[RMDB]
RNA sequence: GGGAACGACUCGAGUAGAGUCGAAAACGCUGGGCAUGUCAGAGGUGGGAGCUCUCUGAAGCGCGCACGGAGAGCAUCGAUCACCUGUGAUGGCCUGUGCUGAAGCGCGCACGGCAACCGAAAGGUGCGAUGAGACGGCUGAUUCGUCAGCCGUCAAUCUCUAGUAGAUCUUCGGAUCUACUAGAGAAAAAGAAACAACAACAACAAC
Reactivity to 2A3 in 0.01 (KOAc 150mM, MgCl2 10mM, bicine 150mM(pH8.5), 24C), signal-to-noise 3, nucleotides 027 to 156: c030g000c010u030g000g000g000c060a200u300g020u020c020a030g000a010g150g000u010g010g010g000a020g000c000u000c000u000c000u030g050a160a070g030c020g000c000g000c000a010c010g010g000a010g010a000g010c010a030u300c020g000a010u030c010a000c010c010u040g100u000g060a020u060g220g000c000c000u020g010u010g000c010u020g010a130a040g000c010g000c000g000c010a000c010g000g000c010a010a000c020c010g040a070a020a050g000g010u030g000c010g040a120u140g090a060g000a030c000g000g000c000u000g040a030u020u070c160g080u020c110a010g000c000c000g000u000c000a000a000
Reactivity to DMS in 0.01 (KOAc 150mM, MgCl2 10mM, bicine 150mM(pH8.5), 24C), signal-to-noise 1, nucleotides 027 to 156: c010g080c020u000g010g000g040c010a260u040g030u000c000a050g000a030g010g000u010g000g020g030a050g020c010u010c000u000c000u000g000a060a050g040c040g000c020g060c020a300c000g030g000a080g010a000g030c000a210u010c030g020a020u000c010a030c000c000u030g000u050g000a000u020g030g020c000c030u000g000u000g040c010u000g000a040a030g000c030g000c020g020c000a300c020g000g000c000a030a060c080c020g030a110a100a140g020g000u000g000c000g010a250u020g010a200g020a020c010g010g000c000u000g000a090u000u010c250g040u000c010a020g030c000c000g030u000c000a010a060
About this RNA
This 207-nucleotide RNA was probed chemically with 2A3 and DMS. The data come from the RNA Mapping Database (RMDB), library RNAMAK. The DMS profile rests on 2,287 reads. The reactions ran in a buffer of 150 mM KOAc, 10 mM MgCl2 and 150 mM bicine (pH 8.5), at 24 C.